[RMDB]
RNA sequence: GGGAACGACUCGAGUAGAGUCGAAAAAGCAACGAGUGUGUGUGGGACGUUUUAUCCCAAGCUCUGACUAGAGCACGCGCUCACACACACCGCGAGCGAGCAUCAGCAGAGCGCAAACGCUGGUAAACAAUGAGAUCUUGUUCGCAAGAUCUCAUUGAAAAGAAACAACAACAACAAC
Reactivity to DMS in 0.01 (KOAc 150mM, MgCl2 10mM, bicine 150mM(pH8.5), 24C), signal-to-noise 9, nucleotides 027 to 126: a110g010c040a180a050c020g000a270g020u000g020u000g010u000g020u000g000g000g000a060c010g020u000u010u010u010a140u010c030c030c040a080a120g010c000u000c000u000g010a130c200u020a100g010a010g010c010a100c120g000c060g000c000u000c000a010c010a010c000a010c010a010c010c010g010c030g010a220g010c020g000a100g010c100a030u000c020a040g020c020a090g010a100g000c090g000c120a070a070a090c110g000c010u000g010g000u000a070a070a170
Reactivity to 2A3 in 0.01 (KOAc 150mM, MgCl2 10mM, bicine 150mM(pH8.5), 24C), signal-to-noise 6, nucleotides 027 to 126: a000g070c050a060a050c020g020a110g060u000g000u000g000u000g000u000g000g030g030a050c010g000u020u040u120u230a150u100c020c020c010a010a010g010c000u000c010u040g270a300c170u170a020g000a000g010c020a000c040g030c010g010c000u000c000a000c000a000c000a000c000a000c010c010g050c030g020a020g000c010g010a040g040c010a040u050c010a010g020c020a020g040a040g140c130g000c120a100a030a030c070g010c020u020g020g040u100a070a060a010

Annotation
Structure probing data (DMS and 2A3) for a 177-nucleotide construct. The data come from the RNA Mapping Database (RMDB), library M2PK90. Reactivities are given for positions 27 through 126. For DMS, 12,947 sequencing reads were counted. High DMS reactivity at an A or C suggests that its Watson-Crick edge is free.